[RMDB]
RNA sequence: GGGAACGACUCGAGUAGAGUCGAAAAGCUAGCAAGUGGUGCCGAUGCGCGCUAACGCACCACAGCCACCGAUGACCUGUAAGGUGGCAAACAGGUCAGCUAAGAAAAGCGCGCACGCGAAAGCGGACAGCUACUACUACUUCGGUAGUAGUAGCUGAAAAGAAACAACAACAACAAC
Reactivity to 2A3 in 0.01 (KOAc 150mM, MgCl2 10mM, bicine 150mM(pH8.5), 24C), signal-to-noise 7, nucleotides 027 to 126: g070c070u110a020g070c090a290a030g010u000g010g010u000g000c010c000g010a020u140g000c000g000c010g000c000u010a010a000c000g010c000a000c000c000a010c020a010g010c010c010a040c010c010g110a130u120g040a050c010c010u020g020u060a040a040g060g020u040g050g000c000a000a000a010c030a010g040g050u060c020a000g030c080u130a140a020g130a110a110a010a010g010c000g010c000g000c000a010c010g020c010g030a100a020a010g010c000g000g020a030
Reactivity to DMS in 0.01 (KOAc 150mM, MgCl2 10mM, bicine 150mM(pH8.5), 24C), signal-to-noise 4, nucleotides 027 to 126: g010c050u010a060g020c080a120a100g000u000g000g010u000g020c000c000g000a090u010g020c030g020c030g020c000u010a240a250c300g020c000a010c010c020a010c000a090g010c020c060a170c010c010g000a210u000g000a030c010c010u000g000u020a140a140g020g000u000g000g000c040a000a070a040c110a020g000g000u000c020a050g000c070u010a130a210g000a060a040a060a040g000c000g010c000g000c030a040c000g000c020g000a100a110a080g000c010g020g000a140
The record gives the reactivity of an RNA of 177 nucleotides to 2A3 and DMS. Values cover nucleotides 27 to 126. DMS adducts were read by reverse transcription with MarathonRT. The 2A3 profile rests on 12,105 reads. The DMS profile rests on 8,068 reads.